Annotation:
An RNA of 207 nucleotides, treated with 2A3 and read out base by base. High 2A3 reactivity points to a flexible backbone, as in loops and unpaired stretches. The 2A3 profile rests on 2,570 reads. The RNA was probed in 150 mM KOAc, 10 mM MgCl2 and 150 mM bicine (pH 8.5) at 24 C. Source: RMDB library M2RFPK, as collected in RNAgym.
[RMDB]
RNA sequence: GGGAACGACUCGAGUAGAGUCGAAAAAGCCUGGUCGAUACGUCGACCAGGCAAUGCCGCCACAACGGCUUCCUGGCGUGGCGGAUCUCAUCCAAUGGAGCAACGCUCCGGAUACGUCCGGAGCGACAAAAGCUCUGCUUCUUCGGAAGCAGAGCAAGAUCUUAUUCAGGUUCGCCUGAAUAAGAUCAAAAGAAACAACAACAACAAC
Reactivity to 2A3 in 0.01 (KOAc 150mM, MgCl2 10mM, bicine 150mM(pH8.5), 24C), signal-to-noise 3, nucleotides 027 to 156: a020g300c000c000u010g000g000u000c000g010a020u010a090c200g050u030c000g000a010c000c000a040g000g040c000a000a000u010g010c000c000g000c000c000a010c000a030a020c040g060g020c010u210u170c020c020u030g000g000c020g000u000g000g010c010g000g000a010u000c040u030c030a120u070c040c080a090a160u210g000g010a020g020c030a030a080c020g020c000u000c020c000g010g000a030u030a030c190g060u000c010c010g020g010a000g000c000g000a000c000a000a150a010a000g000c000u010c000u000g000c000u010u010c000u010u030c070g090g000a000a000g000c000a010g000a000g000c000a000a000